[RMDB]
RNA sequence: GGGAACGACUCGAGUAGAGUCGAAAAAUCGGCGAUCUUCAGCGUCGAUCCGAGGAACUUCGUGAAGGUCGAGAGCCCGUCGUGCAGAUCGUGGAUCUCCUCGGCGGUGAACGGCUCGGUGAAGGUAACGUAGGAGCAGUUUCGACUGCUCCUACGUAAAAGAAACAACAACAACAAC
Reactivity to DMS in 0.01 (KOAc 150mM, MgCl2 10mM, bicine 150mM(pH8.5), 24C), signal-to-noise 2, nucleotides 027 to 126: a030u000c010g050g010c000g000a060u000c110u000u000c140a140g000c020g020u000c010g010a040u000c010c010g010a180g020g010a160a070c050u000u000c040g040u000g020a150a080g000g010u010c020g010a110g000a210g000c100c000c010g030u010c000g010u010g000c190a060g000a000u010c020g000u010g010g000a010u000c010u000c230c000u000c000g020g010c020g000g000u000g000a180a130c040g020g010c010u000c020g000g020u010g000a030a030g020g010u000a110
Reactivity to 2A3 in 0.01 (KOAc 150mM, MgCl2 10mM, bicine 150mM(pH8.5), 24C), signal-to-noise 1, nucleotides 027 to 126: a010u020c020g000g000c020g010a050u030c060u190u120c060a120g030c000g020u030c010g000a030u040c000c010g020a110g100g060a130a090c030u020u030c030g040u050g100a130a040g030g030u000c010g010a010g010a020g150c000c030c000g040u030c010g010u010g080c040a000g020a020u000c060g300u260g130g000a030u010c010u040c000c010u000c000g000g000c030g000g030u040g060a050a020c000g020g000c050u030c040g000g030u140g010a020a010g030g050u050a030